Description: Structure probing data (2A3) for a 207-nucleotide construct. For 2A3, 1,036 sequencing reads were counted.
RNA sequence: GGGAACGACUCGAGUAGAGUCGAAAAACUAUGCACUUGACACCACACUAAUCAAUAAGAAAGUCUUCAUAACUACACAAGGAUCAGAGUCACAGAGCACAGUUUCUUCAGGAGAUAGCGACAGUGCAGUGGCACCUUUAACUGAUGAGGCAGUGGAGUGAGACUAACGAUUCGUCGUUAGUCUCACAAAAGAAACAACAACAACAAC
Reactivity to 2A3 in 0.01 (KOAc 150mM, MgCl2 10mM, bicine 150mM(pH8.5), 24C), signal-to-noise 3, nucleotides 027 to 156: a000c070u140a120u220g060c040a010c040u010u060g040a020c000a020c040c010a040c010a010c060u130a080a080u110c080a120a110u150a170a060g140a150a070a020g050u000c040u060u020c080a100u090a210a120c040u230a050c120a040c020a040a090g040g000a050u060c030a060g030a030g130u000c000a000c010a060g110a010g060c000a000c000a040g000u010u020u020c050u010u030c020a050g110g060a060g100a090u100a040g000c000g040a030c050a030g020u010g010c010a030g030u040g030g000c000a040c000c000u090u100u000a070a060c040u020g070a090u060g000a060g000g090c050a020g030u010g070g080a080